The data come from the RNA Mapping Database (RMDB), libraries RFM100 and RFMREP. This 177-nucleotide RNA was probed chemically with DMS and 2A3. The RNA was probed in 150 mM KOAc, 10 mM MgCl2 and 150 mM bicine (pH 8.5) at 24 C. 2A3 adducts were read by reverse transcription with SuperScript II with manganese. DMS adducts were read by reverse transcription with MarathonRT. Values cover nucleotides 27 to 126.
RNA sequence: GGGAACGACUCGAGUAGAGUCGAAAAGAUUGCAAUGUCACCACGCGCGGGGAUAGAUCCUCUGCAGACGACUGAAAUGACCAAGCGGGUCGUGUAAGCGGUCAAGUAGCCUAGUUGUUACGAGUCGAUUACUCUCUGAAUUCGUUCAGAGAGUAAUAAAAGAAACAACAACAACAAC
Reactivity to DMS in 0.01 (KOAc 150mM, MgCl2 10mM, bicine 150mM(pH8.5), 24C), signal-to-noise 9, nucleotides 027 to 126: g010a100u010u020g010c080a100a060u020g000u010c020a110c050c050a100c090g010c080g000c050g000g000g010g000a100u010a090g000a120u010c020c010u000c020u020g030c030a090g010a110c080g000a050c030u000g010a060a140a060u010g010a060c030c030a130a130g010c100g000g000g000u000c030g010u010g010u020a100a090g010c040g010g000u020c050a060a100g020u010a050g000c000c020u000a110g000u000u000g000u000u000a050c060g000a070g000u010c070g010
Reactivity to 2A3 in 0.01 (KOAc 150mM, MgCl2 10mM, bicine 150mM(pH8.5), 24C), signal-to-noise 5, nucleotides 027 to 126: g090a060u110u140g040c040a040a080u100g070u100c020a020c090c000a060c060g050c010g000c030g030g020g020g000a020u060a160g110a100u090c020c020u030c080u100g010c010a020g030a110c040g000a030c050u050g030a030a090a120u070g020a020c000c010a080a010g060c100g070g040g000u010c050g030u000g010u050a100a030g000c010g020g030u020c010a040a020g060u010a010g070c000c000u030a050g010u010u030g010u010u020a030c070g010a040g040u010c010g020